[RMDB]
RNA sequence: GGGAACGACUCGAGUAGAGUCGAAAAGACGCUGAUGCGAUCGACUGUAAGAUAGAUAAACUGAGCAGACAGAUACGUACGGCAAGUAUCGUCGCCAGAAAUACAGUCGCAAAUUGCCGUACGAAGACCCUAUCGCAUCGUUCGCGAUGCGAUAGGGAAAAGAAACAACAACAACAAC
Reactivity to DMS in 0.01 (KOAc 150mM, MgCl2 10mM, bicine 150mM(pH8.5), 24C), signal-to-noise 1, nucleotides 027 to 126: g030a060c060g000c040u030g010a150u000g000c030g000a130u020c060g040a000c020u040g040u000a000a050g050a040u070a140g060a070u120a030a000a300c000u050g000a080g020c050a060g000a000c000a120g000a120u020a040c000g110u000a000c020g070g000c000a030a040g000u020a050u000c080g050u000c000g000c000c070a000g020a000a190a010u000a000c000a000g000u000c000g040c250a040a150a020u060u000g050c000c000g000u070a020c170g000a170a050g000a290
Reactivity to 2A3 in 0.01 (KOAc 150mM, MgCl2 10mM, bicine 150mM(pH8.5), 24C), signal-to-noise 4, nucleotides 027 to 126: g080a000c020g000c060u150g100a150u270g020c040g090a160u020c030g010a010c000u000g020u020a040a090g090a280u140a040g170a050u200a090a090a050c010u000g000a020g010c060a050g020a000c000a060g020a020u060a130c010g030u010a000c000g000g010c000a000a020g000u050a040u130c070g000u000c000g030c000c010a010g040a000a000a000u050a000c000a000g000u000c020g000c080a040a140a060u030u030g000c000c020g000u000a010c020g020a040a010g050a050
The record gives the reactivity of an RNA of 177 nucleotides to DMS and 2A3. The reactions ran in a buffer of 150 mM KOAc, 10 mM MgCl2 and 150 mM bicine (pH 8.5), at 24 C. Reactivities are given for positions 27 through 126. For 2A3 the reverse transcriptase was SuperScript II with manganese. Reactivities are rounded to 0.1 and cut off at 0 and 3.